[RMDB]
RNA sequence: GGGAACGACUCGAGUAGAGUCGAAAAUGCUACUUCGGUAGCACCAGUCGGGGUCCACAAUGAUGUCCCGUGAGAGCGCAGAUACCUGAAGCCUCCACGGGAGUAGCUCUCGGAUUGAGUGGACGGAGGCACCCAAACGUGGCCGUUCGCGGCCAAAAAUUCUCUACUAUUUCGAUAGUAGAGAAUUAAAAGAAACAACAACAACAAC
Reactivity to 2A3 in 0.01 (KOAc 150mM, MgCl2 10mM, bicine 150mM(pH8.5), 24C), signal-to-noise 3, nucleotides 027 to 156: u070g010c000u010a020c000u020u040c150g090g000u030a020g020c000a020c030c010a010g070u070c020g000g040g070g000u010c050c010a030c010a040a070u200g070a100u140g060u090c000c000c010g020u060g020a300g000a000g010c110g010c060a000g060a260u240a300c030c070u160g060a080a020g000c010c000u000c000c000a010c000g000g040g000a000g000u010a020g000c000u030c000u040c110g150g000a100u120u080g040a040g040u020g000g010a010c000g000g010a010g020g010c010a040c000c020c010a070a130a040c080g030u050g000g030c010c010g000u010u060c230g000c040g170g000c030c040a040a030a000
Reactivity to DMS in 0.01 (KOAc 150mM, MgCl2 10mM, bicine 150mM(pH8.5), 24C), signal-to-noise 2, nucleotides 027 to 156: u000g000c020u000a010c000u000u000c270g040g030u000a020g020c000a030c010c030a090g040u020c060g000g020g030g020u000c000c000a070c050a090a170u020g000a170u010g000u000c010c010c140g050u000g000a090g010a010g040c030g040c040a140g000a300u000a120c170c030u030g000a150a200g010c000c000u000c000c020a160c000g030g010g010a040g020u010a070g020c050u000c050u000c030g020g000a170u000u010g010a240g020u010g020g010a090c010g000g000a090g030g010c020a070c010c010c000a070a080a140c090g010u010g000g030c000c000g010u000u000c250g030c050g020g010c010c000a000a000a070

The record gives the reactivity of an RNA of 207 nucleotides to 2A3 and DMS. DMS adducts were read by reverse transcription with MarathonRT. Conditions: 150 mM KOAc, 10 mM MgCl2 and 150 mM bicine (pH 8.5), 24 C. It was measured as part of the RMDB library RNAMAK.